[RMDB]
RNA sequence: GGGAACGACUCGAGUAGAGUCGAAAAUGCUAGGUGCUCGGGCUUUACGCUUACCAGUGAAGAUUCGUCUGAGGUAGCGUUUUUGCUAGUUGAAAACUACAACUAUGACUGCUCCAGUUGGCCUUCGGUUUUCGUCAGGGUUCGCCCUGACGAAAACAAAAGAAACAACAACAACAAC
Reactivity to 2A3 in 0.01 (KOAc 150mM, MgCl2 10mM, bicine 150mM(pH8.5), 24C), signal-to-noise 2, nucleotides 027 to 126: u100g000c000u000a000g060g100u170g050c000u000c000g000g000g010c000u000u010u030a050c050g010c090u060u180a140c020c020a120g020u030g170a020a060g060a210u090u060c090g080u010c090u020g020a000g000g040u000a000g010c000g010u000u000u000u050u060g010c020u000a000g020u000u050g080a080a060a070a060c170u260a020c030a020a010c010u010a030u150g020a050c000u010g000c000u030c010c000a000g010u000u080g150g120c010c000u120u140c050g020
Reactivity to DMS in 0.01 (KOAc 150mM, MgCl2 10mM, bicine 150mM(pH8.5), 24C), signal-to-noise 1, nucleotides 027 to 126: u000g060c060u000a030g040g020u010g000c010u000c170g050g020g070c020u000u000u010a010c060g010c020u100u030a060c010c010a220g060u050g000a070a090g040a030u000u000c140g010u000c060u000g000a120g000g020u000a060g000c000g010u000u000u000u000u050g060c060u000a030g000u040u000g000a020a090a180a210c180u130a160c000a030a010c110u020a100u000g000a150c080u000g020c000u000c000c000a020g050u000u000g000g000c150c080u000u000c280g000